Overview
Conditions: 150 mM KOAc, 10 mM MgCl2 and 150 mM bicine (pH 8.5), 24 C. Structure probing data (2A3 and DMS) for a 207-nucleotide construct. DMS adducts were read by reverse transcription with MarathonRT. The 2A3 profile rests on 806 reads. High DMS reactivity at an A or C suggests that its Watson-Crick edge is free.
RNA sequence: GGGAACGACUCGAGUAGAGUCGAAAAUAUAUAAAGGGGAGCUUCAGAUUUGUGGCAACUUGAUCAUCCUAAAAUUAGAGAGGUCAUCCCCUGACAUCUGCAGCAGAGACCUGAUUUAGAAUGAAGAGUCACAGCACAAAAGUUCUGCUUCAUGGUAGAUAUCCUAUUACUUCGGUAAUAGGAUAUCAAAAGAAACAACAACAACAAC
Reactivity to 2A3 in 0.01 (KOAc 150mM, MgCl2 10mM, bicine 150mM(pH8.5), 24C), signal-to-noise 1, nucleotides 027 to 156: u210a000u020a010u040a060a110a000g010g000g000g010a000g000c000u010u010c100a050g040a210u160u200u150g020u020g020g030c040a110a140c110u070u160g080a030u090c010a030u020c000c000u060a100a080a090a000u170u060a050g010a010g010a090g130g000u070c010a110u090c010c070c030c000u000g000a000c000a020u110c070u070g000c050a000g000c000a010g050a000g000a020c000c000u020g060a110u000u080u110a030g010a040a020u010g010a070a040g010a000g090u010c020a010c040a040g000c060a030c030a050a150a020a010g030u070u010c000u040g020c000u020u060c060a030u090g000g030u090a060
Reactivity to DMS in 0.01 (KOAc 150mM, MgCl2 10mM, bicine 150mM(pH8.5), 24C), signal-to-noise 1, nucleotides 027 to 156: u000a050u000a180u010a080a090a050g010g030g120g010a100g010c030u000u000c040a060g000a140u000u000u000g030u000g010g040c030a090a090c070u010u000g020a140u000c040a060u000c030c000u020a010a030a040a140u030u010a140g030a160g000a110g020g030u010c020a180u000c000c000c010c020u060g050a100c030a100u000c030u000g020c090a090g030c000a100g000a300g000a120c010c020u000g010a110u010u010u000a020g010a090a030u000g000a070a170g000a200g040u010c030a110c020a030g000c070a090c050a040a070a080a080g000u000u000c000u000g000c000u010u020c050a000u030g000g020u040a100